Structure probing data (DMS) for a 177-nucleotide construct. Source: RMDB library TTRINS, as collected in RNAgym.
[RMDB]
RNA sequence: GGGAACGACUCGAGUAGAGUCGAAAAGAUAUGGAGACGUAGAGCGAUAAGUCGCAAUGCAUAGUCAGGGUCGGAAACGACCCUGACUAUGCAUUGGCGACUUUUGACGCUUGAAGUCUCCUAAGUCGAUUCUUGAUAUCUUCGGAUAUCAAGAAUCAAAAGAAACAACAACAACAAC
Reactivity to DMS in 0.01 (KOAc 150mM, MgCl2 10mM, bicine 150mM(pH8.5), 24C), signal-to-noise 1, nucleotides 027 to 126: g010a100u010a300u010g010g000a010g040a020c000g000u020a300g010a010g000c000g000a080u000a010a000g000u010c000g010c000a020a020u000g020c000a020u000a020g010u000c000a000g000g040g000u010c000g040g000a140a150a210c040g010a010c000c000c000u000g000a010c000u000a000u000g000c000a000u000u000g040g020c010g000a000c000u000u000u000u000g010a170c040g000c000u000u030g010a150a300g000u010c000u010c000c000u020a020a080g020u010c100
Values are in units of 0.01, from 0 to 300, in steps of 10.